Source: RMDB library M2RFPK, as collected in RNAgym.
Structure probing data (2A3) for a 207-nucleotide construct.
Values cover nucleotides 27 to 156.
RNA sequence: GGGAACGACUCGAGUAGAGUCGAAAAUAGCGAAGUAGGAUUAUAUGCGUCAAGUGUUCACAGGCUGGGGAGUCGCCGUGAAACGAAAAGCAGAAAGCGUGCUGCUUACGAUAUAAUUUCCGCACCCAUAAGAAGUCUCUGUUCGCAGAGACUUCAAACCACUGGCUUUGUUCGCAAAGCCAGUGGUAAAAGAAACAACAACAACAAC
Reactivity to 2A3 in 0.01 (KOAc 150mM, MgCl2 10mM, bicine 150mM(pH8.5), 24C), signal-to-noise 1, nucleotides 027 to 156: u150a010g010c020g050a100a000g090u140a060g030g070a000u030u030a000u030a020u140g130c000g020u080c100a110a040g030u060g160u290u060c020a010c080a160g020g000c040u080g030g020g040g000a040g100u090c050g000c010c000g020u010g000a050a020a000c030g020a090a070a000a000g010c010a000g050a100a160a020g270c150g040u120g040c020u000g000c010u010u010a010c030g000a000u000a000u000a010a030u000u020u010c000c000g000c060a050c020c010c010a000u110a070a100g000a000a000g000u000c000u000c000u000g050u080u070c220g000c030a000g000a000g000a000c000u010u010c000a000a000